[RMDB]
RNA sequence: GGGAACGACUCGAGUAGAGUCGAAAAACAAAUACUCACGCUGCUAGGCGGGUGCGCACUGCUGUCUGGCCCGGCGGCGCGCUAGGGCGCACACCUAGCGUUGCAAAGGGUAACCGGGCUGAAAAAACAUUAUCCAAGUCUUCGGACUUGGAUAAUGAAAAGAAACAACAACAACAAC
Reactivity to DMS in 0.01 (KOAc 150mM, MgCl2 10mM, bicine 150mM(pH8.5), 24C), signal-to-noise 3, nucleotides 027 to 126: a060c100a040a090a080u000a080c020u000c010a160c190g010c030u000g010c070u000a120g000g010c040g020g010g010u000g010c010g010c020a220c040u010g010c030u000g010u000c080u000g020g010c010c010c010g000g010c100g030g000c020g000c010g020c020u000a010g000g020g000c090g000c070a040c090a170c000c010u000a000g000c010g020u010u010g040c000a110a140a140g000g010g010u000a090a050c020c000g010g010g010c000u010g000a000a030a040a090a090a110
Reactivity to 2A3 in 0.01 (KOAc 150mM, MgCl2 10mM, bicine 150mM(pH8.5), 24C), signal-to-noise 1, nucleotides 027 to 126: a000c030a000a070a010u070a060c020u010c040a030c060g100c030u130g020c040u070a060g080g000c010g010g050g030u030g000c020g010c020a100c080u070g000c000u050g060u120c040u040g020g000c000c020c000g000g020c030g040g010c000g000c000g000c000u010a000g000g020g010c110g000c030a000c000a020c050c010u010a010g020c010g000u020u210g020c010a050a130a130g130g000g010u060a010a020c000c000g000g000g000c020u040g040a090a020a000a030a010a000
An RNA of 177 nucleotides, treated with DMS and 2A3 and read out base by base. For DMS, 2,532 sequencing reads were counted. The RNA was probed in 150 mM KOAc, 10 mM MgCl2 and 150 mM bicine (pH 8.5) at 24 C. DMS adducts were read by reverse transcription with MarathonRT. Reactivities are given for positions 27 through 126. 2A3 adducts were read by reverse transcription with SuperScript II with manganese.